[RMDB]
RNA sequence: GGGAACGACUCGAGUAGAGUCGAAAAUUCAUAGGUUGGAAUCCUGAUGGUUGCUUGUCAUUAAUCCAAGCCCUGAGAUAAAAAAUGACCCCGUACCUAACUCGUUAUUGCUAACAUACAUGAGGCAGAGUAAUCUGAUUUUCGAAUCAGAUUACUCAAAAGAAACAACAACAACAAC
Reactivity to 2A3 in 0.01 (KOAc 150mM, MgCl2 10mM, bicine 150mM(pH8.5), 24C), signal-to-noise 2, nucleotides 027 to 126: u090u060c040a040u100a040g000g040u000u020g090g020a080a030u070c000c020u030g020a020u060g030g060u110u110g010c010u060u010g030u060c020a150u120u120a090a040u060c030c030a030a000g010c010c000c000u030g010a040g040a060u210a010a150a010a030a000a030u040g030a040c020c000c010c020g040u040a070c000c040u000a070a110c020u020c040g050u090u010a060u040u070g020c060u080a040a110c020a100u150a020c040a020u080g040a060g080g000c040a010
Reactivity to DMS in 0.01 (KOAc 150mM, MgCl2 10mM, bicine 150mM(pH8.5), 24C), signal-to-noise 3, nucleotides 027 to 126: u010u000c040a080u010a060g010g010u000u000g010g000a170a100u010c070c050u000g020a070u000g000g020u000u020g000c080u030u000g010u000c050a110u010u010a100a110u030c110c010a060a060g010c030c010c020u000g010a070g000a100u030a010a040a080a050a080a070u000g000a070c070c030c030c060g010u000a070c030c030u010a050a120c060u000c040g000u000u010a030u000u000g020c100u010a070a070c140a070u000a040c120a070u000g000a070g010g010c170a080
Structure probing data (2A3 and DMS) for a 177-nucleotide construct.
For 2A3 the reverse transcriptase was SuperScript II with manganese.
It was measured as part of the RMDB library OK2TRN.
Conditions: 150 mM KOAc, 10 mM MgCl2 and 150 mM bicine (pH 8.5), 24 C.